Chemical mapping of a 207-nucleotide RNA with 2A3 and DMS.
[RMDB]
RNA sequence: GGGAACGACUCGAGUAGAGUCGAAAACAAUAUUUAAAGCUUGAGGUAGGGUGCAUUUUCUUGGAUAGGAAGGUGCUGUUUCACUAACAUGCCUGCAGUGAAAGGCCAGACUGGAGGAGAAGGGCUUGGAUCACUCCUCAAUGAAUGUCUCUGGCCAUGAUACUAGCUCAUUCGUGAGCUAGUAUCAAAAAGAAACAACAACAACAAC
Reactivity to 2A3 in 0.01 (KOAc 150mM, MgCl2 10mM, bicine 150mM(pH8.5), 24C), signal-to-noise 2, nucleotides 027 to 156: c010a000a050u140a150u180u300u230a180a180a020g020c040u040u090g060a020g050g000u050a020g040g070g020u030g000c030a030u030u020u000u000c100u040u100g080g080a050u100a100g050g020a050a000g010g000u030g020c040u010g070u050u080u060c040a010c080u060a110a000c020a030u060g010c000c020u070g000c060a040g010u040g090a130a010a010g000g020c000c000a000g000a000c010u100g010g000a010g050g010a010g040a060a170g080g040g020c060u090u080g080g030a010u070c020a020c030u010c000c010u000c020a040a110u140g090a030a020u050g040u000c020u000c000u090g000g000c010c020a020
Reactivity to DMS in 0.01 (KOAc 150mM, MgCl2 10mM, bicine 150mM(pH8.5), 24C), signal-to-noise 1, nucleotides 027 to 156: c010a170a080u010a240u000u000u000a040a040a140g010c080u000u010g020a050g010g010u010a090g010g000g000u000g010c060a040u000u000u000u020c000u000u020g020g020a130u020a130g010g000a160a080g010g040u000g050c030u020g010u000u010u010c000a180c030u000a070a180c070a060u000g030c010c020u000g180c120a100g050u010g000a070a030a050g040g000c000c000a040g000a070c040u020g000g010a050g000g010a050g020a050a110g040g010g000c070u020u000g010g010a060u000c020a150c000u000c000c010u000c000a050a050u000g020a090a180u000g010u000c030u000c020u000g030g010c010c010a050

Reactivities are rounded to 0.1 and cut off at 0 and 3. The RNA was probed in 150 mM KOAc, 10 mM MgCl2 and 150 mM bicine (pH 8.5) at 24 C.